[RMDB]
RNA sequence: GGGAACGACUCGAGUAGAGUCGAAAAGUCCUAGCGAAAAGCUAGGACAAGUGCAUCGCUAGACACAUCGUCGAAAAGACGAUCGAAAGAUGCACAUGUCUAGCAAGUCGAGGAGAACUCGACAAAAGACUAUCCUAUCAUUCGUGAUAGGAUAGUCAAAAGAAACAACAACAACAAC
Reactivity to 2A3 in 0.01 (KOAc 150mM, MgCl2 10mM, bicine 150mM(pH8.5), 24C), signal-to-noise 9, nucleotides 027 to 126: g000u000c000c000u000a010g020c020g070a180a120a110a020g010c000u000a000g000g010a000c000a000a010g010u010g010c030a060u070c070g020c060u060a030g030a050c020a000c000a070u000c000g010u000c000g030a060a150a040a120g010a000c000g000a010u020c030g060a070a040a020g050a020u100g000c000a000c000a000u030g010u000c030u020a020g040c060a140a050g000u000c010g000a010g020g030a140g050a270a190c000u000c000g000a000c000a010a040a000a010
Reactivity to DMS in 0.01 (KOAc 150mM, MgCl2 10mM, bicine 150mM(pH8.5), 24C), signal-to-noise 7, nucleotides 027 to 126: g010u000c010c000u020a020g010c060g000a130a110a130a170g010c000u000a000g020g000a010c000a000a030g020u010g010c030a020u000c020g000c100u000a110g010a080c170a140c280a050u010c010g000u000c000g000a120a070a120a150g000a000c000g010a000u010c040g010a100a200a110g000a030u010g010c010a030c010a050u000g020u010c010u000a040g030c060a140a120g000u000c000g020a020g000g000a170g010a110a190c000u000c000g000a000c000a050a060a080a090